RNA sequence: GGGAACGACUCGAGUAGAGUCGAAAAGCAGAUGGAACCGGGAGACAUGGAGUCCCUGGCCAGUGUGAGUCCUAGCAUUGCAGGAGGGGAGACCCUGGAGGAGAGAGCCCGCCUCAAUUGAUGCCUGCGUUAUCGGACAUUUCGAUGUCCGAUAACGAAAAGAAACAACAACAACAAC
Reactivity to DMS in 0.01 (KOAc 150mM, MgCl2 10mM, bicine 150mM(pH8.5), 24C), signal-to-noise 2, nucleotides 027 to 126: g030c030a050g020a100u020g000g020a110a120c040c020g010g010g010a100g000a050c040a120u010g020g020a230g000u000c010c010c010u000g020g000c020c030a050g020u010g020u000g010a100g000u000c010c020u000a090g000c070a100u010u010g020c060a050g010g020a130g010g010g000g010a190g010a130c040c050c010u010g030g010a090g000g010a120g000a080g010a150g010c030c030c060g020c030c010u000c030a090a100u000u010g000a060u000g000c010c030u000g010
Reactivity to 2A3 in 0.01 (KOAc 150mM, MgCl2 10mM, bicine 150mM(pH8.5), 24C), signal-to-noise 1, nucleotides 027 to 126: g000c010a000g100a290u100g070g010a140a120c060c020g000g000g040a250g010a040c080a090u160g190g060a100g070u000c010c000c000u000g050g030c030c010a020g010u040g000u000g080a030g010u000c020c030u030a040g030c050a080u000u100g000c020a020g030g060a030g000g000g000g000a030g000a040c000c000c010u060g050g000a030g030g010a040g000a000g010a000g060c000c010c000g000c000c000u070c060a060a120u090u110g050a050u090g030c000c020u050g040